Structure probing data (2A3 and DMS) for a 177-nucleotide construct.
For 2A3, 20,098 sequencing reads were counted.
The DMS profile rests on 68,856 reads.
RNA sequence: GGGAACGACUCGAGUAGAGUCGAAAACAUUCAGGGAUGCACUGCAACUCAUCCGGGAUAACGAUCAUCAACACGCUGGAAGGCAACAAGAGGUCGUGGGGGAAAGUGACGAAGAGGUUGUGGUCGAAUAAUGGUAUCAUUUCGAUGAUACCAUUAUAAAAGAAACAACAACAACAAC
Reactivity to 2A3 in 0.01 (KOAc 150mM, MgCl2 10mM, bicine 150mM(pH8.5), 24C), signal-to-noise 9, nucleotides 027 to 126: c050a050u150u160c050a040g050g050g030a030u060g020c060a020c100u070g030c030a060a110c030u040c050a070u020c020c020g030g020g010a080u110a100a050c030g030a030u040c020a030u020c020a060a050c040a020c130g020c010u030g020g090a110a040g070g010c020a030a040c030a140a070g040a030g040g020u040c030g030u070g010g020g000g010g030a040a060a030g030u040g030a030c040g020a040a020g040a040g110g010u010u020g020u020g030g050u020c020g000a020
Reactivity to DMS in 0.01 (KOAc 150mM, MgCl2 10mM, bicine 150mM(pH8.5), 24C), signal-to-noise 9, nucleotides 027 to 126: c110a100u020u020c070a090g010g010g010a050u010g000c120a060c070u010g000c110a070a100c140u020c060a060u010c040c030g010g000g000a070u020a080a080c080g000a050u010c050a090u010c060a070a090c190a100c150g000c020u000g000g050a110a080g000g000c040a060a080c180a100a090g000a070g010g010u000c020g020u000g010g000g000g000g000a030a040a050g000u010g000a070c100g020a060a090g000a080g010g010u000u000g010u000g000g010u010c040g000a090
The reactions ran in a buffer of 150 mM KOAc, 10 mM MgCl2 and 150 mM bicine (pH 8.5), at 24 C.